The record gives the reactivity of an RNA of 177 nucleotides to 2A3 and DMS. For 2A3 the reverse transcriptase was SuperScript II with manganese. Values are in units of 0.01, from 0 to 300, in steps of 10. The RNA was probed in 150 mM KOAc, 10 mM MgCl2 and 150 mM bicine (pH 8.5) at 24 C. DMS adducts were read by reverse transcription with MarathonRT. It was measured as part of the RMDB library OK1LIB. For DMS, 3,053 sequencing reads were counted.
[RMDB]
RNA sequence: GGGAACGACUCGAGUAGAGUCGAAAACCUGAGACACCAAAGACAGACGCAAGAUCUCACAAACCGUCAGGUCGGAGGUCGCAGGAGGCAAGCAAUCCAUGCGAAAAGCAUAAAGUAGGAGAAGCCGAAAUAUAAAAUUAUUCGUAAUUUUAUAUUUAAAAGAAACAACAACAACAAC
Reactivity to 2A3 in 0.01 (KOAc 150mM, MgCl2 10mM, bicine 150mM(pH8.5), 24C), signal-to-noise 2, nucleotides 027 to 126: c020c000u060g010a070g070a080c050a020c030c060a040a050a030g000a040c040a020g010a020c040g020c030a090a100g030a270u040c070u090c180a100c060a020a200a080c030c000g020u020c050a110g130g000u000c000g030g020a020g000g010u000c010g000c000a010g000g050a030g020g020c050a010a070g040c000a000a090u040c010c000a040u040g000c000g120a190a230a080a020g010c000a020u060a030a160a030g120u120a090g080g040a060g010a060a060g030c020c020g010
Reactivity to DMS in 0.01 (KOAc 150mM, MgCl2 10mM, bicine 150mM(pH8.5), 24C), signal-to-noise 4, nucleotides 027 to 126: c000c000u030g000a100g010a010c110a050c030c030a060a300a190g010a020c020a080g010a030c040g000c080a130a150g010a130u000c150u060c210a090c090a030a120a140c300c010g010u000c040a090g000g000u020c000g000g010a300g010g010u020c040g010c000a060g000g030a140g030g020c000a050a120g020c180a080a110u030c030c050a080u000g000c000g000a080a120a080a160g000c020a010u010a060a050a090g030u030a070g000g000a060g010a110a140g000c020c020g010